[RMDB]
RNA sequence: GGGAACGACUCGAGUAGAGUCGAAAAUGCUUGACCUGUCCAUCCACCCGGUACCAGAAGCGGACAUCAACGGCGUCAUUAUUUCGUCGUUCCGAGACCCAGACAUCGCGUUGCCCGCAUCUAGCGCGUAGCGCGCUCAUUUCGAUGAGCGCGCUACAAAAGAAACAACAACAACAAC
Reactivity to 2A3 in 0.01 (KOAc 150mM, MgCl2 10mM, bicine 150mM(pH8.5), 24C), signal-to-noise 5, nucleotides 027 to 126: u090g000c020u070u070g030a080c000c010u010g020u040c020c010a060u070c020c000a030c040c020c010g020g020u050a060c010c030a050g010a100a050g030c030g030g030a040c020a090u070c040a040a040c010g000g030c000g070u030c140a160u060u300a120u130u170u090c010g000u000c010g000u030u060c010c030g050a080g030a030c010c010c000a010g020a070c010a080u050c030g000c010g070u040u070g010c000c020c010g010c020a060u050c070u080a030g090c050g000c010
Reactivity to DMS in 0.01 (KOAc 150mM, MgCl2 10mM, bicine 150mM(pH8.5), 24C), signal-to-noise 2, nucleotides 027 to 126: u040g020c070u000u000g000a180c070c010u010g040u010c020c050a060u000c020c000a070c070c010c020g030g050u030a050c080c040a050g000a140a070g010c080g010g000a070c060a110u030c100a030a020c040g000g010c010g010u070c080a080u030u020a060u010u040u050c030g030u000c010g000u000u000c050c030g030a090g010a100c070c070c020a210g040a110c080a060u020c000g000c020g000u010u010g000c040c060c040g000c000a120u010c050u000a050g030c060g000c160
Annotation:
Conditions: 150 mM KOAc, 10 mM MgCl2 and 150 mM bicine (pH 8.5), 24 C. An RNA of 177 nucleotides, treated with 2A3 and DMS and read out base by base. For DMS, 2,625 sequencing reads were counted. DMS adducts were read by reverse transcription with MarathonRT.